Description: Conditions: 150 mM KOAc, 10 mM MgCl2 and 150 mM bicine (pH 8.5), 24 C. This 207-nucleotide RNA was probed chemically with 2A3 and DMS.
RNA sequence: GGGAACGACUCGAGUAGAGUCGAAAAGGGGCUGACCGGCUUUGACAGCGUGAUGAAGCGGUAUGUAAGCAUGUAGUGCGUGGGUGGCUUGCACUAUAAUCUCAGACAUCAAAAGUUUAAUUGGCGAAAAUAACUACGCUCUCGCUGCGUAAUCGAAGUUUAGAGGUUAGUUCGCUAACCUCUAAACAAAAGAAACAACAACAACAAC
Reactivity to 2A3 in 0.01 (KOAc 150mM, MgCl2 10mM, bicine 150mM(pH8.5), 24C), signal-to-noise 3, nucleotides 027 to 156: g030g000g000g000c030u030g050a080c030c040g090g020c040u110u050u110g040a060c040a030g040c030g050u050g040a100u090g050a100a000g010c000g020g010u120a050u070g080u080a030a060g010c030a020u080g030u150a000g000u000g040c040g020u060g010g010g010u060g030g000c030u030u030g000c000a010c000u050a060u040a210a100u030c030u000c020a020g020a070c010a050u060c020a110a040a000a040g050u100u100u150a140a090u140u070g030g000c010g040a010a040a040a090u130a040a000c030u030a000c000g000c020u000c030u030c030g070c090u050g000c020g010u030a040a090u160c060g030a090a000
Reactivity to DMS in 0.01 (KOAc 150mM, MgCl2 10mM, bicine 150mM(pH8.5), 24C), signal-to-noise 2, nucleotides 027 to 156: g020g020g020g040c050u010g010a090c050c030g020g000c070u000u000u020g000a050c000a080g020c020g040u020g010a160u010g020a080a090g030c030g040g030u000a080u000g020u010a080a110g030c040a140u000g040u000a060g010u000g010c050g010u010g010g030g020u000g020g010c020u010u000g010c030a030c040u000a080u000a070a060u000c040u030c050a120g000a040c030a030u010c050a070a060a120a140g030u010u000u010a080a120u000u010g040g010c030g000a060a130a050a100u010a090a080c020u000a090c010g000c000u000c080u000c070g090c010u010g010c020g000u010a090a300u000c050g020a100a150
2A3 adducts were read by reverse transcription with SuperScript II with manganese.